[RMDB]
RNA sequence: GGGAACGACUCGAGUAGAGUCGAAAAUUAAAGAUCGAAAGAUCGCGAUACUCGCCGGCGCCGCUGUAGGCGGACCUUCAGCGACAGCGCCAGAACGAAUAAGGUCCGCAGUACGAAAGUACAAAAAUCAUUCGAAUAAGUUCGCUUAUUCGAAUGAAAAAGAAACAACAACAACAAC
Reactivity to 2A3 in 0.01 (KOAc 150mM, MgCl2 10mM, bicine 150mM(pH8.5), 24C), signal-to-noise 2, nucleotides 027 to 126: u120u070a100a100a020g010a000u010c010g030a090a030a050g010a010u010c020g000c010g040a060u090a190c040u030c060g070c040c070g000g000c000g020c020c010g010c000u000g000u040a050g300g000c000g010g000a000c000c000u010u030c010a010g000c000g040a080c070a080g010c000g000c010c000a040g040a100a040c110g030a060a090u080a090a000g010g000u000c010c010g000c010a000g000u000a000c010g030a110a040a010g000u010a010c030a010a090a000a000a030
This 177-nucleotide RNA was probed chemically with 2A3. The RNA was probed in 150 mM KOAc, 10 mM MgCl2 and 150 mM bicine (pH 8.5) at 24 C.